RNA sequence: GGGAACGACUCGAGUAGAGUCGAAAAUACACGUCGCAUUGAGAAGUCACGCGCUGCCGUUGACGUCGGGCAGUAGAUCAUCAGAUCCAUCGGGUCAACUUUCACCGAAUAGACAAUGCUAUUCAGGAUCAGCGCAUCAGUUUUACCGGACUGUGCCUGUGUCAGAGAGUUUCGACUCUCUGACACAAAAAGAAACAACAACAACAAC
Reactivity to 2A3 in 0.01 (KOAc 150mM, MgCl2 10mM, bicine 150mM(pH8.5), 24C), signal-to-noise 2, nucleotides 027 to 156: u100a000c090a000c000g080u050c030g070c050a000u040u080g030a040g100a210a100g090u100c030a000c200g000c010g010c020u000g080c060c000g000u000u080g070a090c050g060u080c000g030g000g030c060a070g020u090a030g040a030u040c080a090u050c070a060g010a030u000c040c020a020u080c060g100g000g000u060c000a040a020c020u070u110u140c040a060c070c000g010a030a030u000a010g010a020c090a090a110u290g040c030u000a040u030u050c000a070g010g010a120u020c040a050g040c030g000c040a090u090c030a040g030u000u050u150u200a030c000c030g080g010a000c030u020g050u040g090c000c000